[RMDB]
RNA sequence: GGGAACGACUCGAGUAGAGUCGAAAAUACAGCGUUCGCGCUGUAAAAAAUCCUAAGUCAGCUGUGUAUCUCUAGCGUGGGCAUCGAUCAUUCGGAAACGAAUGGGAGCCUCGGGUACACAAGCUGAUAUGGAAAAAAAACCUUGUUCGCAAGGUAACGUAAUGAUAACUUUCGAGUUAUCAUUACGAAAAGAAACAACAACAACAAC
Reactivity to 2A3 in 0.01 (KOAc 150mM, MgCl2 10mM, bicine 150mM(pH8.5), 24C), signal-to-noise 7, nucleotides 027 to 156: u080a000c000a000g000c000g030u040u070c150g040c010g020c090u000g020u020a000a000a000a000a000a020u040c030c000u050a130a020g030u000c000a000g000c000u010g010u000g010u030a020u010c040u020c110u300a100g120c090g120u300g020g020g000c030a150u290c070g080a080u060c000a010u000u010c000g030g040a070a050a090c010g000a010a000u010g010g020g000a010g000c000c000u010c010g010g000g000u000a000c000a000c010a020a020g000c000u000g000a000u000a010u010g000g080a030a030a020a020a000a070a010a020c010c000u010u010g040u080u080c220g020c130a000a000g000g000u020a060a000
Reactivity to DMS in 0.01 (KOAc 150mM, MgCl2 10mM, bicine 150mM(pH8.5), 24C), signal-to-noise 2, nucleotides 027 to 156: u000a040c000a010g020c000g030u000u000c280g020c030g020c000u000g000u000a000a010a070a120a050a070u000c000c010u000a080a230g020u000c010a040g030c010u000g030u000g010u000a010u000c010u010c050u010a140g040c140g020u000g040g070g020c000a250u000c140g010a080u000c010a020u000u010c010g000g010a160a110a270c020g010a010a000u010g020g000g010a120g020c000c000u000c020g010g000g000u000a000c010a010c010a020a070g010c010u020g000a000u000a070u000g040g020a000a000a000a070a110a060a120a030c000c010u000u010g030u000u010c240g050c020a030a030g010g000u000a020a090